[RMDB]
RNA sequence: GGGAACGACUCGAGUAGAGUCGAAAAGAUAUGGAAUGUCGUUGUUAUCUAAGACAGUCGGAAACGAUCGAGAUAAUGACGAGCAUUCCUAAGUCAAAACAGUGCUUGUCUUCGGACAAGCACUGAAGAAUAAGUUUCGGUUCGCCGAAACUUAUUCAAAAGAAACAACAACAACAAC
Reactivity to DMS in 0.01 (KOAc 150mM, MgCl2 10mM, bicine 150mM(pH8.5), 24C), signal-to-noise 4, nucleotides 027 to 126: g000a020u000a300u000g010g000a000a010u000g000u000c000g000u000u000g020u000u000a000u000c000u020a210a080g020a100c300a070g010u000c010g010g000a120a080a160c030g000a000u000c090g010a000g000a010u000a010a010u000g000a030c000g010a060g010c000a000u000u000c000c000u000a020a050g000u000c040a100a080a120a210c020a000g000u000g000c000u000u000g000u000c000u000u000c230g020g000a000c000a000a000g000c000a000c000u000g010a020a070
Reactivity to 2A3 in 0.01 (KOAc 150mM, MgCl2 10mM, bicine 150mM(pH8.5), 24C), signal-to-noise 2, nucleotides 027 to 126: g010a010u070a040u130g000g000a000a030u010g020u010c000g000u000u000g000u010u010a000u000c010u030a110a020g100a150c120a090g050u010c020g010g030a030a100a060c020g000a030u100c030g010a010g000a040u010a000a020u020g000a000c000g020a020g020c000a000u000u000c000c000u010a050a020g010u030c050a020a020a120a140c010a010g020u010g000c020u010u010g020u000c010u060u150c300g040g000a000c000a000a000g000c000a010c000u010g000a000a020
Notes
Structure probing data (DMS and 2A3) for a 177-nucleotide construct. For DMS, 3,092 sequencing reads were counted. The 2A3 profile rests on 4,803 reads. Conditions: 150 mM KOAc, 10 mM MgCl2 and 150 mM bicine (pH 8.5), 24 C.